[RMDB]
RNA sequence: GGGAACGACUCGAGUAGAGUCGAAAAGAAAAGAAACAGCUACGAAAGAAAGAAACGCACAACGAGGUGCCUAGGCGCAGCGUAGCUGAACUGCGCCGCCACUCGAAAAGAAAGAAAUGGCGAAAAAGGGAUAGUCUAUGUUCGCAUAGACUAUCCCAAAAGAAACAACAACAACAAC
Reactivity to 2A3 in 0.01 (KOAc 150mM, MgCl2 10mM, bicine 150mM(pH8.5), 24C), signal-to-noise 2, nucleotides 027 to 126: g040a000a020a000a000g140a060a170a000c040a000g000c030u060a050c110g060a090a080a110g050a000a300a000g110a040a150a070c270g030c000a100c020a060a180c070g010a000g080g000u000g010c000c000u040a010g000g000c000g070c000a020g020c010g010u000a010g000c000u000g010a050a000c000u000g000c010g000c040c000g050c000c020a000c000u000c000g030a010a110a160a040g080a030a080a000g050a000a060a000u050g100g010c130g050a120a100a000a060a000
Reactivity to DMS in 0.01 (KOAc 150mM, MgCl2 10mM, bicine 150mM(pH8.5), 24C), signal-to-noise 1, nucleotides 027 to 126: g040a120a000a060a080g030a010a080a080c170a020g030c000u010a250c050g000a300a010a050g020a050a100a160g000a060a070a070c050g000c020a000c040a070a160c200g000a030g000g000u070g000c040c020u080a040g010g000c000g070c060a000g000c050g010u000a000g000c000u000g000a040a090c040u000g000c000g140c000c020g000c040c030a030c000u000c000g000a020a040a000a060g000a040a080a100g010a090a020a050u000g000g000c020g060a030a040a000a180a030